Conditions: 150 mM KOAc, 10 mM MgCl2 and 150 mM bicine (pH 8.5), 24 C. An RNA of 177 nucleotides, treated with DMS and 2A3 and read out base by base. For 2A3, 9,743 sequencing reads were counted.
[RMDB]
RNA sequence: GGGAACGACUCGAGUAGAGUCGAAAAGGAGAAUUGACUGUAGCAGAGGCAUUAGCAGCUACAGAGGUUUCUAGUGAAGCUUUUGAGGCACUACAAGGCAUCUCAGCUCUUCUUCCUACUGCUGUUAUAAUGACAGGUUAUUCGUAACCUGUCAUUAAAAAGAAACAACAACAACAAC
Reactivity to DMS in 0.01 (KOAc 150mM, MgCl2 10mM, bicine 150mM(pH8.5), 24C), signal-to-noise 7, nucleotides 027 to 126: g010g020a070g000a060a050u010u010g010a120c030u000g000u000a010g020c030a110g010a130g010g010c030a130u020u030a070g030c040a110g020c010u000a070c030a010g000a130g010g010u000u000u010c020u010a100g020u030g010a040a060g010c010u000u020u030u020g010a200g000g010c010a070c040u030a050c230a070a120g000g010c020a040u020c030u000c030a040g000c020u000c010u000u000c020u000u010c000c020u000a080c140u010g010c050u010g000u010u010a130
Reactivity to 2A3 in 0.01 (KOAc 150mM, MgCl2 10mM, bicine 150mM(pH8.5), 24C), signal-to-noise 9, nucleotides 027 to 126: g090g020a040g020a070a070u120u070g110a170c030u080g010u140a010g000c070a040g060a130g250g000c040a070u130u100a050g030c050a020g000c000u030a040c010a020g000a010g010g000u000u050u020c030u070a100g080u080g300a070a020g010c010u080u060u090u160g100a150g020g000c020a010c050u080a040c070a080a050g070g000c020a120u020c030u000c030a010g000c020u010c000u030u000c000u050u060c020c010u040a120c040u050g040c020u020g030u160u060a110